[RMDB]
RNA sequence: GGGAACGACUCGAGUAGAGUCGAAAACGAUGGCAUAUAACCGUAUUGCGGAUGGAGCGUCACGUGAGGACUGUGAAGCACAAUGCGAUAUGUUCUGAUUAUAUGGCGAGUUUGCUUAAUGACAUGUUGCAGUGUGAAUGUUCGCAUUCACACUGCAAAAAGAAACAACAACAACAAC
Reactivity to DMS in 0.01 (KOAc 150mM, MgCl2 10mM, bicine 150mM(pH8.5), 24C), signal-to-noise 2, nucleotides 027 to 126: c030g010a130u020g010g010c030a030u000a040u010a090a030c080c050g000u000a010u000u000g000c000g000g000a300u000g000g020a070g010c000g000u000c010a040c010g000u030g010a080g030g000a040c070u000g050u010g000a050a040g010c020a090c030a070a220u040g000c050g010a020u000a010u000g010u040u040c130u020g000a130u030u000a010u010a040u000g000g000c000g000a160g010u020u000u000g010c050u010u000a020a080u050g000a060c100a050u010g010u000
Reactivity to 2A3 in 0.01 (KOAc 150mM, MgCl2 10mM, bicine 150mM(pH8.5), 24C), signal-to-noise 2, nucleotides 027 to 126: c010g100a150u050g030g060c030a010u010a000u000a010a000c000c010g040u010a010u030u070g000c070g010g040a190u030g070g000a070g010c000g030u040c000a020c010g020u110g150a160g040g150a070c020u050g060u000g020a010a000g010c000a000c000a080a010u110g010c010g000a000u010a000u040g030u180u010c090u040g060a030u000u020a010u000a000u070g050g020c050g000a060g060u060u100u080g030c000u020u180a110a110u150g090a060c030a040u220g000u030